The record gives the reactivity of an RNA of 177 nucleotides to 2A3 and DMS. For 2A3 the reverse transcriptase was SuperScript II with manganese. The 2A3 profile rests on 2,047 reads. DMS adducts were read by reverse transcription with MarathonRT.
RNA sequence: GGGAACGACUCGAGUAGAGUCGAAAAGCAAAACCGCGAACUGUGUUCAGUCUUAAAGUACGAGUGACCGUUCACGUUUAGUCAUAAUGUACAAUGAAAGGCUUCCAGCUUACUAAGGCGUGUACGCUCACUCAUCGGGAUUCGUCCCGAUGAGUGAAAAAGAAACAACAACAACAAC
Reactivity to 2A3 in 0.01 (KOAc 150mM, MgCl2 10mM, bicine 150mM(pH8.5), 24C), signal-to-noise 2, nucleotides 027 to 126: g020c030a020a020a060a040c020c000g000c030g040a060a040c030u030g020u030g030u220u060c040a010g030u000c020u000u170a130a100a030g050u010a020c070g040a020g060u050g010a000c000c030g080u070u100c080a050c100g030u050u110u140a010g010u000c010a040u010a210a040u240g040u020a040c010a070a130u150g080a120a050a030g010g000c000u230u020c020c030a020g000c020u060u050a040c030u090a080a000g110g010c020g000u060g020u030a010c050g000c020
Reactivity to DMS in 0.01 (KOAc 150mM, MgCl2 10mM, bicine 150mM(pH8.5), 24C), signal-to-noise 3, nucleotides 027 to 126: g030c070a050a040a130a070c090c060g010c020g020a050a070c020u000g020u010g000u010u000c070a040g010u010c030u010u010a100a080a180g010u030a010c080g000a290g020u000g000a030c100c030g020u010u000c090a080c100g000u000u020u000a080g010u000c080a010u000a070a120u010g000u000a040c090a050a060u000g020a100a170a080g000g010c030u010u000c110c060a040g000c040u000u000a270c140u020a070a040g000g040c020g010u010g020u000a060c150g000c170
Conditions: 150 mM KOAc, 10 mM MgCl2 and 150 mM bicine (pH 8.5), 24 C.